Chemical mapping of a 177-nucleotide RNA with DMS and 2A3. For DMS the reverse transcriptase was MarathonRT. For 2A3 the reverse transcriptase was SuperScript II with manganese.

RNA sequence: GGGAACGACUCGAGUAGAGUCGAAAAACUCUCUACUUUCUCAAGAAAAGAGGAGACUGCUGGUCGCCCGCCCCCCGUGUUCGAGCAUGGGCCACAAGUCGGCGAAGAGAUCGAGGAUUUAGGGAGACUCAUGAAUAUUGUUCGCAAUAUUCAUGAGAAAAGAAACAACAACAACAAC
Reactivity to DMS in 0.01 (KOAc 150mM, MgCl2 10mM, bicine 150mM(pH8.5), 24C), signal-to-noise 2, nucleotides 027 to 126: a130c030u000c000u010c010u000a040c000u000u000u010c010u030c040a170a170g020a110a040a080a080g020a260g000g020a240g020a050c060u000g010c170u010g020g010u010c040g000c040c020c030g020c060c050c060c030c030c000g040u010g010u000u000c140g000a130g010c050a060u000g010g020g010c110c070a050c110a070a040g020u000c110g010g010c040g010a060a090g000a100g000a130u000c060g000a060g020g000a050u000u000u000a010g010g010g000a050g020a170
Reactivity to 2A3 in 0.01 (KOAc 150mM, MgCl2 10mM, bicine 150mM(pH8.5), 24C), signal-to-noise 1, nucleotides 027 to 126: a010c000u010c010u010c010u000a020c010u040u000u040c020u000c010a080a090g140a120a140a030a000g130a120g070g030a060g000a060c070u070g060c110u100g160g040u000c010g000c050c020c010g040c000c000c030c020c030c000g000u020g000u040u140c030g000a020g060c010a010u030g030g000g000c030c010a050c010a020a040g020u070c000g010g010c000g030a020a030g090a000g000a090u080c050g000a000g050g010a010u010u030u060a020g000g000g000a010g010a010
The reactions ran in a buffer of 150 mM KOAc, 10 mM MgCl2 and 150 mM bicine (pH 8.5), at 24 C.